[RMDB]
RNA sequence: GGGAACGACUCGAGUAGAGUCGAAAAGAAACGCAAGGCCGCUGACCGACGGGAUAUUGUGGGGCUUACCACAGGGGACGCGGCGUUAUCACUUGCCUUUUGAGCCGACCGUCUGGGCUGCAUACAAACCACCCAACUAUCUUCGGAUAGUUGGGAAGGUUUAGAUUAUCUUCGGAUAAUCUAAACCAAAAGAAACAACAACAACAAC
Reactivity to DMS in 0.01 (KOAc 150mM, MgCl2 10mM, bicine 150mM(pH8.5), 24C), signal-to-noise 2, nucleotides 027 to 156: g030a070a080a090c100g000c070a080a080g050g030c010c020g020c020u010g010a250c030c000g020a190c050g070g000g010a110u000a070u010u020g010u000g010g010g020g020c160u010u000a130c020c060a030c030a060g020g020g030g020a260c150g010c020g000g020c040g030u000u040a050u010c100a190c040u000u000g010c010c030u000u010u010u010g000a090g010c000c020g000a070c020c010g010u000c000u010g020g030g020c050u000g020c040a090u010a110c090a040a070a120c000c060a130c000c000c000a000a030c000u000a010u000c010u000u030c300g030g020a000u010a010g000u000u010g000g010g010a020a010
Reactivity to 2A3 in 0.01 (KOAc 150mM, MgCl2 10mM, bicine 150mM(pH8.5), 24C), signal-to-noise 4, nucleotides 027 to 156: g020a020a050a010c100g020c020a010a030g130g000c000c000g010c070u070g070a040c020c020g020a020c000g040g070g050a130u140a100u220u080g000u020g000g020g060g090c090u100u120a040c010c000a010c000a010g020g000g000g040a000c030g000c010g020g030c000g000u040u030a020u030c030a010c090u010u010g000c000c000u040u190u080u160g040a010g010c010c000g050a120c010c020g000u010c010u050g030g040g000c020u060g010c020a040u070a110c040a000a080a020c040c010a020c020c010c000a000a000c000u000a000u010c000u040u020c050g060g000a010u000a010g000u000u000g000g000g000a010a010

Overview: Chemical mapping of a 207-nucleotide RNA with DMS and 2A3. Conditions: 150 mM KOAc, 10 mM MgCl2 and 150 mM bicine (pH 8.5), 24 C. It was measured as part of the RMDB library M2RFPK. For 2A3 the reverse transcriptase was SuperScript II with manganese.